The record gives the reactivity of an RNA of 177 nucleotides to DMS and 2A3. For 2A3 the reverse transcriptase was SuperScript II with manganese.
RNA sequence: GGGAACGACUCGAGUAGAGUCGAAAAUGGUCUGCGCGGUGGCCUCCUCGACCAGCGGCUUCGCGUCCGGAAGUGGUCCGCCGCUUGGCUUCGAGCCCGACGAGCAGCCGGCAACGACAGUGGCGGCGGAGACGGAUUAAUUCGUUAAUCCGUCUCCAAAAGAAACAACAACAACAAC
Reactivity to DMS in 0.01 (KOAc 150mM, MgCl2 10mM, bicine 150mM(pH8.5), 24C), signal-to-noise 8, nucleotides 027 to 126: u010g010g010u010c020u000g020c070g020c030g010g010u000g010g000c050c030u010c210c020u000c050g000a070c030c040a060g000c030g010g010c080u010u010c130g010c160g020u000c030c020g010g020a120a120g020u000g000g000u000c040c070g000c010c000g010c020u000u000g020g010c120u000u000c040g010a070g010c120c020c010g010a080c050g000a080g010c040a070g010c020c010g000g000c070a040a070c060g000a070c130a070g010u000g000g010c040g000g010c170
Reactivity to 2A3 in 0.01 (KOAc 150mM, MgCl2 10mM, bicine 150mM(pH8.5), 24C), signal-to-noise 5, nucleotides 027 to 126: u080g010g020u040c020u050g010c040g000c020g070g040u040g030g000c000c020u020c010c000u010c010g040a040c010c010a000g000c020g030g000c030u170u190c110g050c070g040u000c020c020g100g090a230a060g080u140g140g010u000c020c010g000c000c000g000c000u020u100g020g000c010u050u020c020g010a020g010c000c010c010g040a080c030g010a040g020c030a000g000c000c000g030g010c000a070a040c040g120a030c030a060g030u030g040g030c010g020g020c040